[RMDB]
RNA sequence: GGGAACGACUCGAGUAGAGUCGAAAACGUGGCCUCUUCCGAAAGACACGGAGUGCAAGAAACGUUAGCAAGACACGAAGAGCAGUGUAACAACGUGACACUAACUAUGGAAAGUCGCAGGACACGAAAAAUUAAGUAUAUUCGUAUACUUAAUUUUAAAAGAAACAACAACAACAAC
Reactivity to DMS in 0.01 (KOAc 150mM, MgCl2 10mM, bicine 150mM(pH8.5), 24C), signal-to-noise 9, nucleotides 027 to 126: c050g020u000g010g010c010c010u000c040u010u000c020c020g010a120a100a080g010a120c130a090c110g000g010a090g010u010g010c110a100a100g000a090a080a060c080g010u000u010a070g010c120a100a060g000a100c050a020c020g010a100a130g010a120g020c100a100g010u010g010u020a070a100c100a050a090c050g000u000g000a100c040a060c030u010a070a060c080u010a090u030g000g010a070a080a100g010u010c070g010c110a040g000g000a040c030a020c030g010a040
Reactivity to 2A3 in 0.01 (KOAc 150mM, MgCl2 10mM, bicine 150mM(pH8.5), 24C), signal-to-noise 9, nucleotides 027 to 126: c020g010u030g020g010c000c000u010c010u060u010c020c010g110a150a080a020g100a030c040a010c090g040g030a040g020u040g010c050a060a030g050a150a120a000c030g000u020u020a030g040c070a090a020g050a050c010a000c050g080a110a060g040a020g140c130a060g030u020g020u100a090a070c060a020a010c030g030u030g030a010c010a010c090u120a160a020c020u030a080u120g050g020a080a050a030g020u030c020g000c040a010g020g020a010c010a000c010g080a060

The record gives the reactivity of an RNA of 177 nucleotides to DMS and 2A3. It was measured as part of the RMDB library OK1LIB. Reactivities are given for positions 27 through 126. The 2A3 profile rests on 45,062 reads. DMS adducts were read by reverse transcription with MarathonRT. Conditions: 150 mM KOAc, 10 mM MgCl2 and 150 mM bicine (pH 8.5), 24 C. For 2A3 the reverse transcriptase was SuperScript II with manganese.